[RMDB]
RNA sequence: GGGAACGACUCGAGUAGAGUCGAAAAUGUGUGCUCGAGAGCCUCCCUGUCCGACAGAGCUUUUAGAUCUUCUGAACUUUCCCUGGAGGAUAUCGCUUAUGCUUCAAGCGAUUCUCGGAAUAAUUAAACGAGUAAUGUUAUUCGUAACAUUACUCGUAAAAGAAACAACAACAACAAC
Reactivity to 2A3 in 0.01 (KOAc 150mM, MgCl2 10mM, bicine 150mM(pH8.5), 24C), signal-to-noise 7, nucleotides 027 to 126: u130g070u000g030u040g030c020u010c040g090a100g000a020g070c010c000u000c000c000c020u010g060u000c020c010g020a020c030a040g050a020g020c000u050u090u040u090a060g010a070u020c020u110u010c040u150g040a070a080c030u020u030u030c010c000c000u020g070g010a010g020g010a050u040a010u060c000g010c010u050u040a070u220g090c060u100u120c100a000a000g000c000g010a020u020u020c010u010c010g020g090a090a050u140a100a060u210u210a080a170
Reactivity to DMS in 0.01 (KOAc 150mM, MgCl2 10mM, bicine 150mM(pH8.5), 24C), signal-to-noise 8, nucleotides 027 to 126: u010g010u010g020u000g000c020u000c030g010a100g010a160g010c050c040u000c020c010c040u000g010u000c030c030g000a100c100a070g000a090g000c130u000u000u010u000a070g010a090u000c040u010u000c080u000g010a080a090c100u000u000u000c010c000c000u000g010g010a080g000g000a050u000a030u000c010g000c000u000u000a090u010g010c140u000u010c110a040a010g000c010g010a020u000u000c010u000c010g010g010a090a080u010a070a090u010u010a050a110
Chemical mapping of a 177-nucleotide RNA with 2A3 and DMS. The RNA was probed in 150 mM KOAc, 10 mM MgCl2 and 150 mM bicine (pH 8.5) at 24 C. For DMS the reverse transcriptase was MarathonRT. For 2A3 the reverse transcriptase was SuperScript II with manganese. For DMS, 17,178 sequencing reads were counted. The data come from the RNA Mapping Database (RMDB), library M2PK90.